[RMDB]
RNA sequence: GGGAACGACUCGAGUAGAGUCGAAAAACUACAUUGGCACAACGUGAUAAUACAGUAUACUAUUUCACAAGAUGUAGCAUGCGAUUGUAUGAUUGGUUGCUUACUAUCAAUGAUGAAACUACACAAAUUAAAGGCAUCGAUGAAACCGUUGCAAGCACCCCGAAUUAAAUUUCGAUUUAAUUCGGGGAAAAGAAACAACAACAACAAC
Reactivity to DMS in 0.01 (KOAc 150mM, MgCl2 10mM, bicine 150mM(pH8.5), 24C), signal-to-noise 2, nucleotides 027 to 156: a070c020u010a070c000a160u030u000g020g030c120a110c020a060a100c080g000u000g000a040u000a020a040u010a070c020a060g010u000a300u000a040c030u010a020u010u020u000c000a060c180a040a090g000a050u000g000u000a030g030c010a030u020g010c060g000a060u010u000g020u010a100u000g000a180u020u020g000g010u000u000g000c060u000u010a100c080u000a040u000c010a080a060u000g040a100u000g020a130a030a130c100u000a030c020a070c060a030a060a170u000u050a020a100a060g030g020c030a050u000c020g010a020u020g010a180a070a060c060c040g000u020u000g010c010a060a060g000c030a190
Reactivity to 2A3 in 0.01 (KOAc 150mM, MgCl2 10mM, bicine 150mM(pH8.5), 24C), signal-to-noise 3, nucleotides 027 to 156: a000c070u140a030c030a070u040u070g100g020c050a030c020a120a050c100g010u030g020a060u100a230a020u060a090c090a010g090u070a060u030a160c070u040a090u030u070u010c030a030c030a070a050g040a040u030g010u010a010g010c010a020u110g050c020g130a060u030u080g050u020a070u100g040a070u010u100g030g000u020u050g020c020u030u050a020c060u040a040u040c030a110a150u080g060a050u080g020a090a040a020c060u170a050c060a030c010a060a170a080u200u170a120a040a080g030g000c010a010u030c050g080a050u070g060a060a010a040c020c030g010u010u030g070c060a080a020g070c030a030

Structure probing data (DMS and 2A3) for a 207-nucleotide construct. DMS adducts were read by reverse transcription with MarathonRT. The data come from the RNA Mapping Database (RMDB), library OK3TST. The RNA was probed in 150 mM KOAc, 10 mM MgCl2 and 150 mM bicine (pH 8.5) at 24 C.